[RMDB]
RNA sequence: GGGAACGACUCGAGUAGAGUCGAAAAAAGUUUGCCAAUCUUACUACGACACCUUCAAUGACAUCAUUUUCGUGGAAUUGACCUUUAAUAUUUUCGAAAGGUGUUGGUAACGUAUCUUUGAUUGAUAUAAAUCAAACACGUUCGCGUGUUUGAUUUAAAAAGAAACAACAACAACAAC
Reactivity to DMS in 0.01 (KOAc 150mM, MgCl2 10mM, bicine 150mM(pH8.5), 24C), signal-to-noise 3, nucleotides 027 to 126: a070a090g020u020u000u000g010c090c010a060a010u000c010u010u000a040c170u000a060c010g010a060c220a010c010c010u000u010c110a080a100u000g000a100c050a030u020c090a100u010u000u000u000c090g010u000g000g010a080a030u010u000g000a100c180c080u000u010u010a080a080u000a090u000u000u000u010c090g030a040a020a040g020g010u000g000u000u000g000g000u000a060a130c040g000u000a000u010c070u000u000u000g010a050u000u000g000a100u000a070
Reactivity to 2A3 in 0.01 (KOAc 150mM, MgCl2 10mM, bicine 150mM(pH8.5), 24C), signal-to-noise 1, nucleotides 027 to 126: a000a000g080u080u070u040g030c000c000a020a020u050c020u030u010a010c010u000a020c000g030a010c000a000c090c010u110u180c060a040a130u250g070a020c010a020u090c030a080u080u140u140u100c050g030u040g040g070a070a020u030u060g100a070c000c000u050u090u080a200a130u110a130u060u200u100u060c070g000a080a020a000g070g000u000g000u030u040g020g000u000a030a000c070g010u030a010u030c100u000u120u020g050a040u030u040g020a010u000a000